RNA sequence: GGGAACGACUCGAGUAGAGUCGAAAACGCUGGGUAACUUCGUGCGGCCGGGGUCCGGCUUCGUUGAAACUACUGAAGCGCGCACGGUAGUGGAGAAGCGGACAAGAAUGCACGAAGUUACCUGUGCUGAAGCGCGCACGGCAACCGAAAGGUGCGAGUGGGCACUAUAGUUCGCUAUAGUGCCCACAAAAGAAACAACAACAACAAC
Reactivity to 2A3 in 0.01 (KOAc 150mM, MgCl2 10mM, bicine 150mM(pH8.5), 24C), signal-to-noise 1, nucleotides 027 to 156: c010g000c010u010g000g000g000u000a000a030c000u000u010c000g010u000g020c070g070g110c140c080g180g000g060g030u010c000c020g280g080c190u000u010c040g090u080u030g010a030a010a000c000u010a010c010u010g020a170a040g000c000g000c000g000c010a020c020g000g000u000a000g010u020g010g020a020g010a030a000g010c000g000g000a010c000a030a060g130a160a110u300g000c000a000c010g010a000a000g000u000u000a000c000c000u000g000u010g030c000u000g050a060a000g030c040g000c000g000c000a010c000g010g010c010a010a010c000c000g030a110a040a010g000g000u020g020c000g000a050

The record gives the reactivity of an RNA of 207 nucleotides to 2A3.
The RNA was probed in 150 mM KOAc, 10 mM MgCl2 and 150 mM bicine (pH 8.5) at 24 C.
It was measured as part of the RMDB library RNAMAK.